RNA sequence: GGGAACGACUCGAGUAGAGUCGAAAACACGUGAAAUAAUCAGAGGAAUCGUUUGAAAUCAUCGUAGUAAUCGCGCGAAAAUCACGUGAAAUAAUCAGAGGAAUCGUUUGAAAUCAUCGUAGUAAUCCAUCUUGUGGGUAUUCGUACCCACAAGAUGAAAAGAAACAACAACAACAAC
Reactivity to 2A3 in 0.01 (KOAc 150mM, MgCl2 10mM, bicine 150mM(pH8.5), 24C), signal-to-noise 6, nucleotides 027 to 126: c020a000c010g020u020g050a030a050a070u190a060a070u200c120a060g010a040g100g080a070a050u080c030g100u050u060u100g130a120a110a030u100c050a010u050c030g010u020a080g030u030a120a030u060c020g010c000g000c030g100a040a040a000a060u070c020a000c010g000u010g010a000a000a000u130a000a030u090c050a020g010a020g070g070a020a060u070c010g040u020u100u110g070a070a050a030u050c030a010u060c040g010u030a070g030u030a060a050u020c010
Reactivity to DMS in 0.01 (KOAc 150mM, MgCl2 10mM, bicine 150mM(pH8.5), 24C), signal-to-noise 4, nucleotides 027 to 126: c020a010c030g010u000g000a050a130a110u020a170a090u010c010a050g020a040g000g030a090a070u000c050g020u010u010u000g020a080a120a110u010c070a050u020c050g010u010a080g020u010a060a100u000c090g000c140g000c070g010a030a040a110a130u010c020a000c010g010u000g010a050a050a070u020a070a070u030c020a060g000a030g010g020a050a070u000c020g000u000u030u000g000a060a050a070u010c030a050u000c040g000u020a040g030u000a090a140u000c060